[RMDB]
RNA sequence: GGGAACGACUCGAGUAGAGUCGAAAAAAGAAACAAGAACUCUUGAAACUAUCUCAAGGUUUUAGAAAGUUGGACCAGAGCUAGUUUUAAGGCUAAAAAACCAACCAAUUUUCUAAGCAUUGUAGAAGUUUGUGUUUAGGGCAAGAUUUUUGGACUGCAUAAGCAGUAGGUUCGCCUACUGCUUAUGAAAAGAAACAACAACAACAAC
Reactivity to 2A3 in 0.01 (KOAc 150mM, MgCl2 10mM, bicine 150mM(pH8.5), 24C), signal-to-noise 2, nucleotides 027 to 156: a020a030g070a020a030a000c040a020a020g030a060a020c020u050c030u100u020g000a020a000a000c000u020a130u070c000u010c030a060a150g010g030u060u110u130u170a040g000a050a040a010g010u030u000g050g020a070c020c080a060g000a030g040c000u020a020g070u090u140u080u230a070a000g000g000c000u080a090a170a040a000a000a000c060c040a050a050c040c020a020a030u000u000u000u140c000u020a040a020g000c020a050u050u020g060u140a020g010a100a010g010u080u080u090g060u040g030u040u150u070a030g010g000g020c020a050a000g000a060u000u010u000u050u210g050g030a090c010u090g000
Reactivity to DMS in 0.01 (KOAc 150mM, MgCl2 10mM, bicine 150mM(pH8.5), 24C), signal-to-noise 2, nucleotides 027 to 156: a070a060g000a100a130a120c050a120a160g000a080a060c050u000c020u000u000g010a070a050a050c050u000a100u000c020u000c040a060a080g010g000u000u000u010u000a050g030a030a050a070g020u000u010g010g020a160c130c060a200g010a090g030c050u000a060g000u010u000u000u020a120a190g000g020c050u040a000a040a090a060a050a070c100c020a080a130c010c000a050a020u000u010u000u000c000u000a020a050g010c020a020u000u000g020u000a040g010a100a070g000u020u000u030g030u000g000u000u000u010a080g010g000g040c020a050a100g010a130u000u000u000u000u000g000g000a220c120u000g040
The record gives the reactivity of an RNA of 207 nucleotides to 2A3 and DMS. For DMS the reverse transcriptase was MarathonRT. Conditions: 150 mM KOAc, 10 mM MgCl2 and 150 mM bicine (pH 8.5), 24 C.